[RMDB]
RNA sequence: GGGAACGACUCGAGUAGAGUCGAAAAUCCUGUGGUUACACCUCGGAAGGCCUCCGCGGACCUGCAGAGAAAAGAAGAAGGGCCCAGAGGGGAAUGAGCCUCGUCGUCGACGAAGGGGUGCAUUCCGCAUGUGGAUAGCGUUCGCGCUAUCCACAUGAAAAGAAACAACAACAACAAC
Reactivity to DMS in 0.01 (KOAc 150mM, MgCl2 10mM, bicine 150mM(pH8.5), 24C), signal-to-noise 1, nucleotides 027 to 126: u020c000c000u000g000u000g000g000u010u010a070c220a060c070c030u010c040g020g010a160a070g010g020c120c000u000c070c040g060c070g010g010a110c100c100u010g040c090a060g000a130g000a080a080a080a090g020a150a140g000a090a090g020g010g010c040c000c020a060g000a070g010g020g010g000a000a010u000g000a170g020c010c000u010c000g000u000c020g030u010c170g030a150c040g000a030a100g020g000g000g010u010g030c000a030u000u000c010c020g000